[RMDB]
Background:
An RNA of 207 nucleotides, treated with 2A3 and DMS and read out base by base. Source: RMDB library OK3TST, as collected in RNAgym.

RNA sequence: GGGAACGACUCGAGUAGAGUCGAAAAAAAGGUGAACCUAAUAUUAUGAGAUUAGUAACACCGCCUUUGAAUACAGACCCUGAGAACCUACAAUUAGGUACUGUAACAGUAUUACCUGAUUCUAACGAAGCAGUAUGUAUUUCAUAUGCUAUUACUAAGUUGUAGACCAAUUCGUUGGUCUACAACUAAAAGAAACAACAACAACAAC
Reactivity to 2A3 in 0.01 (KOAc 150mM, MgCl2 10mM, bicine 150mM(pH8.5), 24C), signal-to-noise 4, nucleotides 027 to 156: a000a000a010g010g000u010g010a040a030c010c010u000a010a030u050a040u300u230a220u270g120a140g010a120u000u020a010g020u050a160a040c020a010c030c030g000c000c010u090u030u060g030a040a020u040a030c030a000g070a030c000c010c030u040g030a050g010a140a050c040c030u080a050c130a120a070u070u030a020g030g000u010a020c030u040g070u130a090a080c030a080g050u050a070u160u090a040c000c030u040g020a070u050u000c030u080a100a100c060g060a080a000g010c010a020g070u030a000u020g050u010a070u020u200u060c020a020u030a040u110g000c020u060a090u220u000a150c030u040a100
Reactivity to DMS in 0.01 (KOAc 150mM, MgCl2 10mM, bicine 150mM(pH8.5), 24C), signal-to-noise 3, nucleotides 027 to 156: a010a040a010g020g010u000g000a300a150c300c000u000a040a010u010a080u020u000a150u000g000a180g030a080u000u000a020g000u000a100a060c010a030c030c020g010c010c020u000u020u000g010a070a070u000a060c050a040g000a140c030c030c030u000g000a170g010a100a110c060c020u010a050c050a040a110u010u000a030g000g040u000a030c090u000g010u000a070a130c070a130g020u000a150u000u000a070c020c010u000g000a050u000u000c030u000a080a120c120g000a120a140g020c050a060g020u000a020u000g000u010a080u010u000u000c030a120u010a070u020g010c040u000a060u010u000a070c020u000a090

Conditions: 150 mM KOAc, 10 mM MgCl2 and 150 mM bicine (pH 8.5), 24 C. The DMS profile rests on 5,920 reads.